[RMDB]
RNA sequence: GGGAACGACUCGAGUAGAGUCGAAAACUCGGAGAUUUCAUCAAGACGUGCUACAGAAGAUGUAUGAUGGAUCCUGAGCCAACCGGUAGGAAGACUGUGCAGAUACACCAGACGAUGGAUAAACGAACAUGCUCGGGACGUUCGCGUCCCGAGCAUGAAAAGAAACAACAACAACAAC
Reactivity to 2A3 in 0.01 (KOAc 150mM, MgCl2 10mM, bicine 150mM(pH8.5), 24C), signal-to-noise 1, nucleotides 027 to 126: c000u090c070g000g000a300g020a000u150u040u000c000a000u000c020a170a170g150a000c000g130u060g100c150u120a220c000a000g300a300a000g000a300u000g000u040a060u000g000a000u000g000g000a000u000c000c000u010g000a000g050c000c000a070a000c000c000g020g040u090a170g140g000a000a020g090a000c000u000g020u040g000c000a010g130a060u090a170c070a040c030c000a020g070a220c060g000a060u130g000g000a000u000a200a100a000c090g090a040a000
The record gives the reactivity of an RNA of 177 nucleotides to 2A3.
It was measured as part of the RMDB library OK1LIB.
2A3 adducts were read by reverse transcription with SuperScript II with manganese.
The reactions ran in a buffer of 150 mM KOAc, 10 mM MgCl2 and 150 mM bicine (pH 8.5), at 24 C.